The data come from the RNA Mapping Database (RMDB), library OK2TRN. This 177-nucleotide RNA was probed chemically with 2A3 and DMS. 2A3 adducts were read by reverse transcription with SuperScript II with manganese. Reactivities are rounded to 0.1 and cut off at 0 and 3. Values cover nucleotides 27 to 126. For 2A3, 3,040 sequencing reads were counted.

RNA sequence: GGGAACGACUCGAGUAGAGUCGAAAACAUGCUCUCCCAGCGGUACGAGUGAGGGAGGGAGCUGACGAGACGACCCACUAACGCAAGGGCCUGUGUCCUGCUUCUGCACAGGCAGGAAGGUGGUGCCCACGGUCUAUCAUUUCGAUGAUAGACCGUGAAAAGAAACAACAACAACAAC
Reactivity to 2A3 in 0.01 (KOAc 150mM, MgCl2 10mM, bicine 150mM(pH8.5), 24C), signal-to-noise 3, nucleotides 027 to 126: c030a030u170g000c000u010c010u000c020c010c010a010g040c050g050g140u300a120c120g050a080g150u120g050a300g090g000g000a040g030g020g000a030g030c060u050g030a000c060g030a030g010a040c030g070a100c010c010c000a030c070u090a110a060c090g050c140a060a060g060g030g020c000c020u100g000u000g020u070c010c020u030g030c020u070u010c040u110g070c070a030c010a080g040g000c010a010g000g000a030a010g070g030u070g000g020u130g100c000c020
Reactivity to DMS in 0.01 (KOAc 150mM, MgCl2 10mM, bicine 150mM(pH8.5), 24C), signal-to-noise 4, nucleotides 027 to 126: c120a090u000g010c020u000c020u000c000c010c000a300g010c070g010g020u010a070c180g020a140g020u000g000a170g010g020g010a080g010g000g010a070g000c050u000g000a130c070g010a090g010a070c100g010a180c010c000c020a080c180u000a080a110c110g020c180a110a090g010g000g010c020c010u000g000u020g010u000c020c010u000g000c020u000u000c080u000g000c110a050c160a070g010g000c000a030g000g000a050a090g000g020u010g010g000u010g010c020c040